[RMDB]
RNA sequence: GGGAACGACUCGAGUAGAGUCGAAAAAAAGAUAUGGAGCACGUAACAGCUUGGAUUUAUACAGAAGUCUAUAUCGGAAACGAUAUAGUCACUGUAUUGUCAGCUGGAGAAGUGCUCCUAAGUCAAACUAUAACAAAAUGUUCGCAUUUUGUUAUAGAAAAGAAACAACAACAACAAC
Reactivity to 2A3 in 0.01 (KOAc 150mM, MgCl2 10mM, bicine 150mM(pH8.5), 24C), signal-to-noise 4, nucleotides 027 to 126: a000a000a000g080a030u110a050u160g010g000a000g020c010a000c000g010u030a060a020c010a000g020c030u120u240g110g010a060u300u300u130a000u030a010c030a010g090a270a020g140u000c000u010a000u010a000u000c000g050g000a060a130a010c010g000a000u000a000u010a000g000u000c000a020c050u000g000u010a000u010u020g000u010c010a010g000c000u020g020g010a030g000a010a000g000u000g000c000u020c010c000u000a030a010g020u000c010a020a060a070
Reactivity to DMS in 0.01 (KOAc 150mM, MgCl2 10mM, bicine 150mM(pH8.5), 24C), signal-to-noise 5, nucleotides 027 to 126: a050a070a090g000a050u010a300u000g010g010a010g020c010a010c000g000u010a150a270c000a000g000c010u010u010g020g000a020u010u000u000a010u000a010c000a000g000a180a110g020u000c010u010a010u000a000u020c000g000g010a120a070a230c000g010a010u000a000u010a010g000u000c030a160c000u000g000u010a000u000u000g010u000c000a030g000c000u010g000g010a080g010a080a180g000u000g020c000u000c000c000u000a010a080g010u000c050a160a120a230